[RMDB]
RNA sequence: GGGAACGACUCGAGUAGAGUCGAAAACGGAUAGCCAUUUGCUUGACAAUAUCCUCAUCAGCACUCUCCUGGCUGGUACCGAUCGCACUCAUAACCAGAGCCCCCUUUUGAUGAGCCAGUCGGACAAAUGGAUUUUAUCAUUCGUGAUAAAAUCCAUAAAAGAAACAACAACAACAAC
Reactivity to 2A3 in 0.01 (KOAc 150mM, MgCl2 10mM, bicine 150mM(pH8.5), 24C), signal-to-noise 9, nucleotides 027 to 126: c040g020g020a070u060a040g040c030c040a130u070u070u240g040c050u060u090g030a040c040a100a100u060a080u170c000c030u050c030a110u040c020a010g030c010a010c040u050c010u010c010c020u030g040g000c010u030g000g040u050a070c020c020g030a040u070c030g010c030a030c020u040c020a070u060a130a080c030c010a040g020a040g080c000c000c000c000c010u020u060u060u120g110a110u040g010a010g020c020c010a030g030u050c030g020g030a030c030a010a120
Reactivity to DMS in 0.01 (KOAc 150mM, MgCl2 10mM, bicine 150mM(pH8.5), 24C), signal-to-noise 7, nucleotides 027 to 126: c170g000g010a080u000a040g000c010c110a060u020u020u020g010c030u010u010g000a150c090a080a080u030a070u010c050c010u000c060a050u020c060a070g000c060a060c060u000c030u000c020c020u000g000g000c030u000g000g030u010a060c070c050g000a050u010c080g000c120a100c050u010c020a060u030a080a100c070c060a080g000a130g000c010c010c000c030c030u000u000u000u010g010a060u010g010a070g000c150c060a090g000u000c040g000g010a090c130a040a080